[RMDB]
Chemical mapping of a 177-nucleotide RNA with DMS and 2A3.
The data come from the RNA Mapping Database (RMDB), library TTRDES.

RNA sequence: GGGAACGACUCGAGUAGAGUCGAAAAGAUAUGGACUCAUAGAGGACAACAGCCUAGGGUCGGAAACGACCCAUAGGACAUGUCCGAUUGUGAGUCCUAAGUCAAAAGGACAUCUUCGGAUGUCCAACGCCACCAAAUAGUUCGCUAUUUGGUGGCGAAAAGAAACAACAACAACAAC
Reactivity to DMS in 0.01 (KOAc 150mM, MgCl2 10mM, bicine 150mM(pH8.5), 24C), signal-to-noise 1, nucleotides 027 to 126: g010a020u000a300u000g020g020a000c000u000c000a000u000a070g020a300g000g000a030c000a000a060c190a140g000c000c000u010a050g000g020g020u000c010g010g000a000a070a160c010g000a000c010c010c000a010u000a000g000g000a020c040a230u000g000u000c000c000g000a250u000u030g000u000g000a030g000u000c000c000u000a000a110g020u020c030a070a070a040a120g000g040a000c000a000u010c000u000u000c190g050g000a020u000g020u020c000c000a050a050
Reactivity to 2A3 in 0.01 (KOAc 150mM, MgCl2 10mM, bicine 150mM(pH8.5), 24C), signal-to-noise 1, nucleotides 027 to 126: g020a000u060a020u190g000g020a000c000u000c000a020u060a050g130a100g020g010a020c010a180a000c040a300g050c000c000u000a000g020g040g000u000c030g020g000a070a000a010c000g000a000c040c000c010a010u020a000g000g000a000c000a170u300g000u070c000c000g000a030u040u150g000u030g050a000g000u000c010c000u020a000a000g010u000c020a000a080a160a100g000g000a010c010a060u010c040u060u090c300g160g000a030u000g000u000c000c000a000a000